[RMDB]
RNA sequence: GGGAACGACUCGAGUAGAGUCGAAAAAGGGGCAAGGGUCAACGGCGCCAGCGGGGCGGCUAGCAGGGGCAGCGCCGCCGGGAGCAACGCAAGAGUUUGCUCGAGCAGCGUUUUAACCAGCGCGAUGCUUAACGCCCUUAUUCGUAAGGGCGUUAAGAAAAGAAACAACAACAACAAC
Reactivity to 2A3 in 0.01 (KOAc 150mM, MgCl2 10mM, bicine 150mM(pH8.5), 24C), signal-to-noise 1, nucleotides 027 to 126: a000g060g000g000g000c050a030a040g090g000g050u040c040a060a060c050g050g000c040g010c030c000a010g020c000g000g010g020g000c020g010g000c030u060a040g000c050a030g000g020g040g040c010a000g030c000g040c030c000g050c020c000g030g040g000a030g000c010a020a040c040g050c090a220a050g070a050g130u070u110u140g020c000u020c020g000a040g000c040a020g020c000g000u090u000u000u130a070a010c050c000a030g020c040g010c070g040a040u110g020
Reactivity to DMS in 0.01 (KOAc 150mM, MgCl2 10mM, bicine 150mM(pH8.5), 24C), signal-to-noise 2, nucleotides 027 to 126: a080g010g000g010g020c080a080a080g000g020g000u010c050a090a150c100g030g000c060g000c040c050a040g000c070g000g040g000g000c040g010g000c040u000a100g040c080a080g010g000g000g000c140a080g020c040g010c010c040g000c020c040g000g010g000a030g010c030a040a040c060g010c150a120a160g000a120g000u010u000u000g010c020u000c010g000a070g020c080a110g010c030g010u010u010u000u000a070a220c120c080a100g010c060g000c040g010a110u020g010